An RNA of 177 nucleotides, treated with DMS and 2A3 and read out base by base. For DMS the reverse transcriptase was MarathonRT. For 2A3 the reverse transcriptase was SuperScript II with manganese.
RNA sequence: GGGAACGACUCGAGUAGAGUCGAAAAGAUUGGGUCGUGACUCCAGCCCCGCCGAGCCGACCCGAAAUGAGAAGCUCUCCUCCUGUGAAGCCCCCUUCCUGGGGCGCUGUGCAGCGAGGCCUCUUGGAUCGUAGCAUCUGUUCGCAGAUGCUACGAUAAAAGAAACAACAACAACAAC
Reactivity to DMS in 0.01 (KOAc 150mM, MgCl2 10mM, bicine 150mM(pH8.5), 24C), signal-to-noise 2, nucleotides 027 to 126: g060a130u030u000g000g010g000u000c010g000u080g000a100c030u000c020c150a110g040c040c010c000c010g100c070c200g000a000g030c000c000g000a020c010c010c000g040a040a100a130u050g000a030g050a240a080g000c090u020c130u040c000c000u000c000c000u020g000u000g160a110a120g020c000c000c000c000c050u000u000c210c200u040g010g000g000g000c100g000c000u000g000u010g000c020a000g030c050g000a020g030g010c300c060u000c050u000u000g010g010
Reactivity to 2A3 in 0.01 (KOAc 150mM, MgCl2 10mM, bicine 150mM(pH8.5), 24C), signal-to-noise 2, nucleotides 027 to 126: g100a110u080u210g000g000g000u000c020g040u020g130a280c000u000c020c020a090g020c000c000c000c050g050c040c020g000a000g000c000c010g020a020c000c020c000g010a000a060a030u250g000a030g020a170a040g010c030u040c010u010c010c000u000c000c000u020g010u030g010a100a010g000c000c000c000c000c000u020u060c000c010u020g010g010g000g010c020g000c010u030g080u120g010c010a020g000c000g070a000g000g000c000c030u000c010u000u000g050g020